[RMDB]
RNA sequence: GGGAACGACUCGAGUAGAGUCGAAAACACGACAUGGCCGACGGGUCGCCAGACUAUAAGGUUCUGUACCUGGAGGCAGAACGCAGGCGCGAGGAAGAACAACGCAAGCGCGAGGAGGCAGAACGCAAUGGACGUAUUACUUCGGUAAUACGUCCAUAAAAGAAACAACAACAACAAC
Reactivity to DMS in 0.01 (KOAc 150mM, MgCl2 10mM, bicine 150mM(pH8.5), 24C), signal-to-noise 2, nucleotides 027 to 126: c060a080c090g000a090c020a080u010g050g050c010c020g010a180c030g010g040g010u010c050g000c120c050a050g000a120c030u010a150u020a090a110g000g000u020u000c030u000g000u000a080c020c020u010g030g020a170g020g000c010a060g000a100a030c050g030c040a100g000g010c090g060c010g000a030g010g010a120a070g030a060a070c110a130a090c060g000c030a050a110g030c090g000c050g010a120g010g000a050g030g000c010a070g000a050a000c100g030c090a150
Reactivity to 2A3 in 0.01 (KOAc 150mM, MgCl2 10mM, bicine 150mM(pH8.5), 24C), signal-to-noise 1, nucleotides 027 to 126: c040a040c030g070a030c030a080u130g030g010c000c000g030a020c000g010g020g020u080c040g070c080c010a020g050a000c020u040a040u060a300a050g170g000u050u000c050u040g050u030a070c030c030u020g070g010a030g000g030c010a000g030a060a030c050g010c040a000g030g000c030g020c050g070a010g000g010a040a110g030a080a040c020a010a030c030g000c030a050a050g020c010g000c000g110a000g000g000a050g020g040c000a010g060a030a040c050g000c050a010